Structure probing data (2A3 and DMS) for a 177-nucleotide construct.
DMS adducts were read by reverse transcription with MarathonRT.
For 2A3 the reverse transcriptase was SuperScript II with manganese.
For DMS, 4,427 sequencing reads were counted.
The RNA was probed in 150 mM KOAc, 10 mM MgCl2 and 150 mM bicine (pH 8.5) at 24 C.
RNA sequence: GGGAACGACUCGAGUAGAGUCGAAAAGAUAUGGAUCCCAUCAACAACAGCGACCCAUCGGAAACGAUGGUGUCGACAUGUUGAUGGGAUCCUAAGUCAAAUCUUAUUAACUUCGGUUAAUAAGAAACAUACAGGUGAACUUCGGUUCACCUGUAUGAAAAGAAACAACAACAACAAC
Reactivity to 2A3 in 0.01 (KOAc 150mM, MgCl2 10mM, bicine 150mM(pH8.5), 24C), signal-to-noise 1, nucleotides 027 to 126: g000a020u030a010u030g010g020a000u020c030c000c000a010u000c000a000a020c030a020a040c040a030g050c000g010a000c020c000c000a000u000c000g000g000a020a010a000c010g000a000u000g030g000u010g000u000c000g000a010c010a140u300g000u020u000g000a000u000g010g040g020a000u000c000c010u020a000a000g000u000c000a000a060a300u010c010u010u010a010u010u000a040a000c000u040u090c300g170g000u010u010a000a000u010a000a000g000a020a030a010
Reactivity to DMS in 0.01 (KOAc 150mM, MgCl2 10mM, bicine 150mM(pH8.5), 24C), signal-to-noise 3, nucleotides 027 to 126: g010a020u000a030u010g000g000a000u000c000c000c000a010u010c000a010a010c010a130a100c260a180g000c010g000a000c000c000c000a000u000c000g010g000a010a010a040c010g000a020u000g000g010u000g010u010c000g010a030c110a090u020g020u000u000g000a010u010g000g000g010a000u000c000c000u000a010a060g000u000c000a160a140a170u000c000u000u000a020u000u000a000a010c000u010u010c250g040g000u010u000a000a000u000a010a010g020a040a110a230